Description:
Chemical mapping of a 170-nucleotide RNA with 2A3 and DMS. The RNA was probed in 150 mM KOAc, 10 mM MgCl2 and 150 mM bicine (pH 8.5) at 24 C.
[RMDB]
RNA sequence: GGGAACGACUCGAGUAGAGUCGAAAAAUAAGAGUUUCUCUGAUAGUGGUUGCAUUCUUCCAUCUGAGUGCACUAUGUUUAGGGAUGCAGAGGGCCGUAUGACACCAUACUGCCAUGAUCCUACUGUGAACGUAAUCCUUCGGGAUUACGAAAAGAAACAACAACAACAAC
Reactivity to 2A3 in 0.01 (KOAc 150mM, MgCl2 10mM, bicine 150mM(pH8.5), 24C), signal-to-noise 9, nucleotides 027 to 129: a000u260a050a040g070a000g030u010u040u000c020u000c010u010g040a050u050a120g070u040g050g020u180u170g010c010a010u020u020c010u170u120c160c060a230u100c120u120g000a000g020u010g000c000a000c010u020a030u060g080u000u050u080a030g010g020g020a030u090g080c030a000g040a140g120g030g000c020c010g000u000a000u020g080a110c020a050c180c000a010u010a000c000u010g000c000c000a040u090g030a040u020c030c010u030a080c070u100g060u040g120a100a010
Reactivity to DMS in 0.01 (KOAc 150mM, MgCl2 10mM, bicine 150mM(pH8.5), 24C), signal-to-noise 8, nucleotides 027 to 129: a000u030a070a050g000a080g020u000u000u000c000u030c010u000g020a010u000a070g060u010g020g040u020u050g030c070a030u010u000c020u010u020c170c140a090u030c170u010g000a000g010u000g000c020a040c030u000a000u020g000u020u020u010a040g000g000g000a030u020g040c030a060g030a090g000g010g030c000c040g000u030a000u000g000a170c240a120c300c030a040u000a010c000u000g010c000c000a080u040g020a080u030c000c000u000a080c110u020g010u000g040a090a130

For 2A3, 42,394 sequencing reads were counted. For DMS, 58,053 sequencing reads were counted. The data come from the RNA Mapping Database (RMDB), library 15KLIB. DMS adducts were read by reverse transcription with MarathonRT.